[RMDB]
RNA sequence: GGGAACGACUCGAGUAGAGUCGAAAAUGUAUGCUAAGUUUAAUUAGUUAAUGCUGCUAAUUAUGAAGCCUAAAAAGUUGUGUUUCCCUCGCUAUCCAGUGCUGUAAUUAAUGCUGUAUUGGACGUCUUCUAAAAUAUAGUUCGCUAUAUUUUAGAAAAAAGAAACAACAACAACAAC
Reactivity to 2A3 in 0.01 (KOAc 150mM, MgCl2 10mM, bicine 150mM(pH8.5), 24C), signal-to-noise 2, nucleotides 027 to 126: u120g010u030a020u080g010c000u080a140a060g020u090u070u080a070a060u000u020a020g050u040u210a170a140u300g040c080u050g000c020u020a010a010u030u000a040u060g100a030a020g020c010c070u120a130a030a010a040a010g020u080u030g030u010g010u060u070u000c000c000c000u000c010g030c010u080a030u030c000c010a000g000u000g000c000u030g050u090a060a070u150u210a100a080u220g020c030u030g000u010a010u000u010g020g000a000c010g040u040c030
Reactivity to DMS in 0.01 (KOAc 150mM, MgCl2 10mM, bicine 150mM(pH8.5), 24C), signal-to-noise 4, nucleotides 027 to 126: u020g010u010a040u010g010c010u000a080a210g020u010u020u010a030a020u010u000a010g000u000u010a080a110u010g010c200u010g000c020u000a030a020u000u000a020u000g000a160a060g000c030c080u030a040a070a060a140a090g010u000u020g020u000g000u000u000u000c010c000c020u020c100g010c080u000a160u000c020c020a030g020u000g000c030u010g010u000a040a110u030u030a090a100u010g000c010u010g010u000a040u010u010g000g010a030c250g000u020c140
Chemical mapping of a 177-nucleotide RNA with 2A3 and DMS. It was measured as part of the RMDB libraries RFM100 and RFMREP. The reactions ran in a buffer of 150 mM KOAc, 10 mM MgCl2 and 150 mM bicine (pH 8.5), at 24 C. DMS adducts were read by reverse transcription with MarathonRT.